[RMDB]
RNA sequence: GGGAACGACUCGAGUAGAGUCGAAAAUAGAAGAGAAAGAUCAGUUAAGUCCUUUGGACCUGAUCAGCUUGAUACAAGAACUACUGAUUUCAACUUCUUUGGCUUAAUUCUCUCGGAAACGAUGAAACAUAAUUCAGUUGUUCGCAACUGAAUUAUGAAAAGAAACAACAACAACAAC
Reactivity to DMS in 0.01 (KOAc 150mM, MgCl2 10mM, bicine 150mM(pH8.5), 24C), signal-to-noise 5, nucleotides 027 to 126: u000a040g010a040a030g000a070g000a120a140a050g010a010u000c000a000g000u000u000a080a070g010u000c000c010u010u000u000g020g000a080c070c060u000g000a070u010c120a090g010c090u000u010g010a100u010a100c080a030a030g000a050a040c050u010a040c010u000g000a020u000u000u000c010a170a230c020u000u000c000u000u000u000g010g000c120u010u010a060a140u000u000c020u000c030u000c020g000g000a100a060a120c050g010a060u010g000a100a070a140
Reactivity to 2A3 in 0.01 (KOAc 150mM, MgCl2 10mM, bicine 150mM(pH8.5), 24C), signal-to-noise 4, nucleotides 027 to 126: u110a020g030a040a000g020a000g030a040a060a010g010a010u010c010a000g010u070u150a140a000g010u020c030c000u080u110u300g020g010a020c010c020u050g030a060u050c010a000g040c000u050u080g030a050u080a170c050a060a040g020a110a020c020u060a020c020u070g010a080u000u040u050c020a040a040c010u020u010c000u030u040u050g040g010c000u010u020a030a030u210u000c020u010c000u000c040g030g030a070a050a000c030g010a040u110g060a070a050a000